The data come from the RNA Mapping Database (RMDB), library TTRDES. Chemical mapping of a 177-nucleotide RNA with 2A3 and DMS. The 2A3 profile rests on 28,046 reads. The reactions ran in a buffer of 150 mM KOAc, 10 mM MgCl2 and 150 mM bicine (pH 8.5), at 24 C.
[RMDB]
RNA sequence: GGGAACGACUCGAGUAGAGUCGAAAAGAUAUGGACGUGUGUGAGCUUUUGACGAGAGUCAGUCGGAAACGACUGUCUCUCGAUAAGCUCCACACGUCCUAAGUCAAAACAGGACUUCGGUCCUGAAGUUAGCUAUUAACUUCGGUUAAUAGCUAACAAAAGAAACAACAACAACAAC
Reactivity to 2A3 in 0.01 (KOAc 150mM, MgCl2 10mM, bicine 150mM(pH8.5), 24C), signal-to-noise 6, nucleotides 027 to 126: g030a010u040a050u140g000g010a000c010g010u010g010u010g080u180g030a000g000c040u100u180u300u300g280a180c050g010a000g010a000g010u010c000a010g000u010c000g010g010a040a060a050c010g000a000c000u010g000u000c000u010c000u000c000g000a000u000a000a000g000c000u010c010c000a000c010a010c000g000u000c000c000u000a000a000g000u000c010a000a000a040a070c010a010g000g010a000c000u070u190c300g140g000u000c000c000u000g000a060a010
Reactivity to DMS in 0.01 (KOAc 150mM, MgCl2 10mM, bicine 150mM(pH8.5), 24C), signal-to-noise 7, nucleotides 027 to 126: g010a040u000a300u010g010g000a000c000g030u010g010u000g010u020g020a010g010c000u000u000u010u010g030a250c150g000a010g010a010g010u000c000a010g010u000c000g010g000a130a100a210c010g010a020c000u000g000u000c000u000c000u000c000g010a030u000a010a020g010c000u000c000c000a000c000a000c000g000u000c000c000u000a010a080g010u000c040a100a090a150a270c010a010g000g000a030c000u010u010c230g050g010u000c000c000u000g000a030a090